[RMDB]
RNA sequence: GGGAACGACUCGAGUAGAGUCGAAAACUCCAUUUCAGGUCUAACUUUCCAAGAGUGUCUCAUGAGCAGCCUUUUGUCUGGUGGUACAAUAUCUUUAAGAUACUUAUCAAAAAGAUCAGGCAUUGUCGCGUGGUGUAGUAUUCGUACUACACCACGCAAAAGAAACAACAACAACAAC
Reactivity to 2A3 in 0.01 (KOAc 150mM, MgCl2 10mM, bicine 150mM(pH8.5), 24C), signal-to-noise 1, nucleotides 027 to 126: c000u000c010c000a000u010u070u090c050a030g110g000u000c050u040a060a080c010u110u120u000c040c010a050a020g060a050g090u060g040u070c030u010c110a010u090g040a020g040c020a010g060c020c010u110u210u090u070g050u070c050u030g010g060u020g040g020u070a010c050a050a020u050a010u140c030u050u270u110a090a010g010a020u050a120c020u190u220a090u080c020a040a070a070a030a040g050a030u050c050a020g010g090c050a050u010u100g080u090c030
Reactivity to DMS in 0.01 (KOAc 150mM, MgCl2 10mM, bicine 150mM(pH8.5), 24C), signal-to-noise 1, nucleotides 027 to 126: c080u010c000c010a120u020u000u020c050a070g010g010u010c020u010a070a090c060u000u010u010c050c050a060a080g000a040g010u000g000u000c030u000c070a040u000g000a120g020c030a040g000c020c020u000u000u030u000g020u010c030u020g020g020u020g000g060u000a050c240a090a120u000a060u000c000u000u010u000a080a210g000a010u000a060c080u010u010a030u000c000a020a060a050a040a030g030a050u020c170a090g000g010c000a110u040u010g000u000c110